About this RNA: Source: RMDB library OK2TRN, as collected in RNAgym. The record gives the reactivity of an RNA of 177 nucleotides to 2A3 and DMS. For 2A3, 1,105 sequencing reads were counted. For DMS, 804 sequencing reads were counted. For DMS the reverse transcriptase was MarathonRT.
RNA sequence: GGGAACGACUCGAGUAGAGUCGAAAAGGCUCGGACGCGGCCCUGCUGCCUCGCCUCAGCGCGGACACCGACAAGGGCCUGCUGAAGCGCACCAAUCAGAACUUGCACGACUUCUCUGUCAAGGGUCCGAAGUGAUGCGUUUCGACGCAUCACUUCGAAAAGAAACAACAACAACAAC
Reactivity to 2A3 in 0.01 (KOAc 150mM, MgCl2 10mM, bicine 150mM(pH8.5), 24C), signal-to-noise 1, nucleotides 027 to 126: g060g020c010u010c030g060g000a010c020g010c020g050g010c000c000c000u010g040c040u020g000c010c000u090c050g020c020c010u180c130a080g000c040g000c030g110g010a020c040a070c040c080g120a140c110a110a080g010g000g000c020c030u080g000c020u020g010a050a000g000c020g010c070a060c030c050a010a060u080c050a060g030a110a060c020u060u030g060c080a010c140g030a040c050u190u090c050u110c000u000g150u170c060a020a080g060g000g030u000c040
Reactivity to DMS in 0.01 (KOAc 150mM, MgCl2 10mM, bicine 150mM(pH8.5), 24C), signal-to-noise 1, nucleotides 027 to 126: g010g020c020u020c040g000g030a210c160g030c000g000g020c000c020c060u020g000c080u000g010c010c030u010c010g020c030c030u010c210a060g000c180g030c050g060g000a080c020a080c070c070g030a220c220a080a100g000g000g000c000c010u040g030c020u000g000a180a160g020c050g000c030a160c030c000a110a070u010c020a000g000a040a070c010u000u010g020c040a080c040g010a050c110u000u020c090u000c020u000g010u020c090a050a100g000g010g000u010c080